Chemical mapping of a 170-nucleotide RNA with 2A3 and DMS. High 2A3 reactivity points to a flexible backbone, as in loops and unpaired stretches. Source: RMDB library 15KLIB, as collected in RNAgym. The reactions ran in a buffer of 150 mM KOAc, 10 mM MgCl2 and 150 mM bicine (pH 8.5), at 24 C.

RNA sequence: GGGAACGACUCGAGUAGAGUCGAAAAUUGCUAAAGCCUUACAAACAUACAGCGAGACUGGUAGUGAUCUUCUUUACCAACCACCCAACUGUAGCAUAACCUCUGGCGUGUUGCAAAGCGGUUUGGUCAGCUGGGAGGUUCGCCUCCCAGAAAAGAAACAACAACAACAAC
Reactivity to 2A3 in 0.01 (KOAc 150mM, MgCl2 10mM, bicine 150mM(pH8.5), 24C), signal-to-noise 6, nucleotides 027 to 129: u110u070g020c030u080a080a050a060g000c000c030u120u110a040c070a070a250a000c050a070u230a040c020a030g020c000g010a040g050a060c070u080g040g020u090a070g040u030g160a080u010c040u080u000c000u020u120u020a060c060c000a030a020c020c050a050c000c010c010a010a060c050u050g040u030a000g020c010a010u020a100a080c010c040u090c060u100g020g010c020g050u060g030u030u040g020c010a060a060a060g040c040g040g000u040u120u060g060g020u030c000a010g030
Reactivity to DMS in 0.01 (KOAc 150mM, MgCl2 10mM, bicine 150mM(pH8.5), 24C), signal-to-noise 8, nucleotides 027 to 129: u050u040g000c030u030a060a070a060g000c050c020u020u080a090c180a080a080a090c100a010u020a060c120a030g040c000g010a060g020a050c010u000g020g050u040a070g030u000g030a040u020c020u040u030c070u000u040u040a050c060c060a040a090c090c050a100c080c040c040a040a050c050u020g020u000a050g040c020a060u040a040a100c010c010u030c090u010g020g050c060g040u060g000u030u060g020c050a010a060a020g030c040g000g000u020u060u020g010g000u000c020a100g010